An RNA of 177 nucleotides, treated with 2A3 and DMS and read out base by base. Source: RMDB libraries RFM100 and RFMREP, as collected in RNAgym. DMS adducts were read by reverse transcription with MarathonRT.
RNA sequence: GGGAACGACUCGAGUAGAGUCGAAAACAGAGAAGGGAAAGCAGUCUGUUCUGAACAUAGGGACAUAAGUUCAUUCAUGCCAAGUAUCUUUCCAGCAUGUUUCUCCCAUUUAGAAUAUCUAGCAUGUGUCUGUACAAUCCUUCGGGAUUGUACAGACAAAAGAAACAACAACAACAAC
Reactivity to 2A3 in 0.01 (KOAc 150mM, MgCl2 10mM, bicine 150mM(pH8.5), 24C), signal-to-noise 4, nucleotides 027 to 126: c030a000g050a040g030a150a150g100g000g060a040a040a050g020c020a000g050u030c020u030g050u070u050c020u020g020a030a000c000a110u140a130g080g000g030a020c020a040u170a090a100g060u080u040c020a000u140u050c030a010u040g040c030c020a110a000g030u000a090u100c020u060u060u000c010c000a000g010c030a040u020g000u010u050u000c030u000c000c040c000a020u160u160u190a040g010a030a020u070a050u140c070u090a020g020c050a030u110g010u020
Reactivity to DMS in 0.01 (KOAc 150mM, MgCl2 10mM, bicine 150mM(pH8.5), 24C), signal-to-noise 1, nucleotides 027 to 126: c110a040g000a050g030a120a020g020g000g040a100a040a040g040c190a140g050u020c010u000g030u000u000c030u080g000a090a110c130a130u030a070g000g050g050a080c120a040u040a040a040g010u000u020c030a050u000u040c080a020u000g000c020c040a040a150g010u030a050u010c030u000u030u020c010c040a060g000c180a140u000g000u000u000u000c120u010c030c000c000a130u000u060u000a040g010a180a140u000a080u050c030u000a090g000c170a060u000g010u000